[RMDB]
RNA sequence: GGGAACGACUCGAGUAGAGUCGAAAAGAUAUGGACAGUGAACUACUCGGAAACAGGGUCGAAGAACCAUAUAGCUCGGAAACGAGCUAUAUGGGGAGACCCUGGUGUACGAGCACUGUCCUAAGUCCAUCAUGAUUAUGUUCGCAUAAUCAUGAUGAAAAGAAACAACAACAACAAC
Reactivity to 2A3 in 0.01 (KOAc 150mM, MgCl2 10mM, bicine 150mM(pH8.5), 24C), signal-to-noise 5, nucleotides 027 to 126: g020a030u070a040u130g000g000a010c000a000g010u000g010a080a050c060u260a050c020u300c020g000g010a050a070a020c010a000g000g020g010u020c020g160a300a140g030a150a040c000c000a000u010a000u000a000g010c000u000c010g030g010a040a050a050c000g000a000g010c000u000a000u000a000u000g000g000g000g000a030g000a000c000c050c000u000g000g000u010g000u000a010c000g000a000g010c010a000c000u010g000u010c000c000u010a000a010g000u000c010
Reactivity to DMS in 0.01 (KOAc 150mM, MgCl2 10mM, bicine 150mM(pH8.5), 24C), signal-to-noise 8, nucleotides 027 to 126: g010a060u000a210u010g010g020a030c010a010g020u010g010a090a040c060u010a300c000u000c000g010g000a270a240a210c010a010g000g010g020u000c000g020a120a170g020a170a300c010c000a000u000a010u000a000g010c000u000c000g000g000a060a040a140c000g000a010g020c000u000a000u000a000u000g010g000g010g000a050g000a010c000c010c000u000g000g000u000g010u000a200c010g000a000g000c000a010c000u000g010u010c000c010u000a020a070g000u000c010